[RMDB]
RNA sequence: GGGAACGACUCGAGUAGAGUCGAAAAGUUGACUUGUUCGCAAGUCAACAAAGAAACUGGAAGGCGCGGCGAGCUGCUGCCGCAGUGAAUCAAAUGCAGCAAAAACCCGACGGUUCGCCGUCGGGAACAUUCCCAUACCGUUCGCGGUAUGGGAAUGAAAAGAAACAACAACAACAAC
Reactivity to DMS in 0.01 (KOAc 150mM, MgCl2 10mM, bicine 150mM(pH8.5), 24C), signal-to-noise 1, nucleotides 027 to 126: g000u000u000g000a000c000u000u000g000u010u040c180g040c000a040a010g010u000c010a010a000c010a040a050a130g010a050a120a110c050u010g010g010a110a140g010g000c130g040c000g000g010c000g010a110g020c000u000g030c030u010g000c010c000g000c000a050g000u000g000a130a080u000c080a010a000a040u000g020c000a010g050c020a020a030a070a140a030c010c000c000g000a000c000g000g010u000u000c260g020c010c000g010u010c000g000g000g000a010a020
Reactivity to 2A3 in 0.01 (KOAc 150mM, MgCl2 10mM, bicine 150mM(pH8.5), 24C), signal-to-noise 3, nucleotides 027 to 126: g000u000u010g000a000c000u010u000g010u030u090c150g010c090a010a000g000u020c000a010a000c010a000a010a000g030a030a150a020c090u120g050g140a110a020g150g000c060g010c010g050g010c000g030a070g020c000u000g000c020u010g000c000c000g000c040a050g090u110g150a030a030u090c030a020a010a050u300g000c000a000g000c010a020a000a000a090a000c000c000c010g000a000c000g000g050u030u030c210g020c080c000g000u000c010g010g000g020a020a000